[RMDB]
RNA sequence: GGGAACGACUCGAGUAGAGUCGAAAAGGCAGCGAAUUCGUUCGCUGCCAAUACAGGACGUGGAGCCGGCUUCACGCCGCACGUCGAUGACGCCCGGGCCGGAGAAUCCAGAUUUCGAUCUGGAUAACGUGUAAUGGAUAUUCGUAUCCAUUACACGAAAAGAAACAACAACAACAAC
Reactivity to 2A3 in 0.01 (KOAc 150mM, MgCl2 10mM, bicine 150mM(pH8.5), 24C), signal-to-noise 8, nucleotides 027 to 126: g000g000c000a010g010c010g010a010a020u090u090c180g070u100u010c000g020c000u000g000c000c000a000a000u010a000c000a000g010g060a020c010g010u010g010g040a040g100c030c010g030g000c010u120u120c060a030c070g010c000c010g020c020a020c010g020u020c040g090a200u180g020a010c020g020c000c010c020g030g140g000c030c000g030g030a040g080a050a030u010c000c000a000g010a020u060u080u150c170g050a020u010c000u000g000g000a000u000a010a020
Reactivity to DMS in 0.01 (KOAc 150mM, MgCl2 10mM, bicine 150mM(pH8.5), 24C), signal-to-noise 7, nucleotides 027 to 126: g000g000c000a010g020c000g010a010a030u000u010c200g010u000u000c010g010c000u000g010c000c000a010a010u000a070c120a130g020g000a030c000g010u000g010g000a060g020c140c030g000g010c010u000u000c100a050c060g010c010c010g010c080a130c020g000u000c020g010a110u010g000a050c060g000c010c010c010g000g000g010c010c010g000g000a080g000a120a060u000c000c000a010g000a020u000u000u010c180g000a030u000c000u000g000g000a010u000a030a100